An RNA of 207 nucleotides, treated with 2A3 and read out base by base. Reactivities are given for positions 27 through 156. The reactions ran in a buffer of 150 mM KOAc, 10 mM MgCl2 and 150 mM bicine (pH 8.5), at 24 C. The data come from the RNA Mapping Database (RMDB), library M2RFPK. The 2A3 profile rests on 858 reads. 2A3 adducts were read by reverse transcription with SuperScript II with manganese.

RNA sequence: GGGAACGACUCGAGUAGAGUCGAAAAAGGCAUACCAUUACGAUGGUAUGGCAAGUCCGUGACGGCGAUGGAUCCCGCCUGGCCGAUGCCGAACUGCCGAUCUGGCUGAUGGUUCCUGCCCCGUCAAAAAACGUAAAGCACUUCGGUGCUUUACGAACAUACCUCGGACGUUCGCGUCCGAGGUAUGAAAAGAAACAACAACAACAAC
Reactivity to 2A3 in 0.01 (KOAc 150mM, MgCl2 10mM, bicine 150mM(pH8.5), 24C), signal-to-noise 1, nucleotides 027 to 156: a000g060g000c010a010u010a010c000c000a000u030u070a060c290g070a010u000g010g010u040a010u040g040g120c020a040a070g060u000c010c000g070u060g000a000c010g010g000c060g070a050u050g010g000a040u010c000c010c010g020c010c010u020g030g000c020c000g020a040u110g000c010c130g120a180a110c110u120g000c010c020g020a100u010c040u070g030g000c020u030g040a080u090g060g000u000u000c030c000u070g070c010c010c000c000g030u050c040a070a040a000a000a000a000c020g000u000a020a000a000g000c000a000c000u060u120c260g070g000u000g000c000u000u000u000a000c000g000a000a010